[RMDB]
RNA sequence: GGGAACGACUCGAGUAGAGUCGAAAAGGGCAAAUCUUAUCAGUCAGUUAAUCCACCAAGAUACCUCCUUUCCUGACUUCAGUCAGGGAUAUAAAUGGGGUAUCUUUAUCAAAACCCUACCCUCAAAUCUCAGGGAUCUACGAGAAUAAGAGCUAGAUAUUACUAAUAUCUUCGGAUAUUAGUAAUAAAAAGAAACAACAACAACAAC
Reactivity to 2A3 in 0.01 (KOAc 150mM, MgCl2 10mM, bicine 150mM(pH8.5), 24C), signal-to-noise 3, nucleotides 027 to 156: g000g000g010c070a040a110a120u050c070u100u100a120u110c040a050g230u030c020a030g030u060u130a080a050u060c040c030a040c060c040a070a000g000a000u000a010c000c000u080c020c010u040u000u020c000c000u000g000a000c000u160u110c200a030g000u000c000a000g000g040g050a010u100a010u030a090a020a050u160g000g000g000g040u020a000u000c000u000u000u000a020u020c000a010a020a000a030c000c010c000u010a030c020c020c000u050c040a090a160a100u070c040u030c090a030g080g000g030a070u050c030u140a030c060g060a020g040a100a020u110a070a050g040a010g050c020u070a020g150a090
Reactivity to DMS in 0.01 (KOAc 150mM, MgCl2 10mM, bicine 150mM(pH8.5), 24C), signal-to-noise 2, nucleotides 027 to 156: g030g030g050c030a030a110a070u000c040u000u000a060u000c030a100g030u010c040a140g030u000u000a060a080u000c010c020a090c090c160a030a060g010a030u000a030c000c010u050c020c180u000u000u000c000c000u040g010a010c000u000u000c200a130g030u000c000a030g020g000g000a000u000a060u010a020a080a110u010g010g010g020g010u000a000u000c000u000u000u010a060u010c060a040a090a100a100c000c000c000u010a110c020c000c000u010c050a050a060a140u000c040u000c020a050g000g010g010a050u000c020u000a050c030g010a120g020a050a130u010a010a070g020a130g030c030u000a080g010a300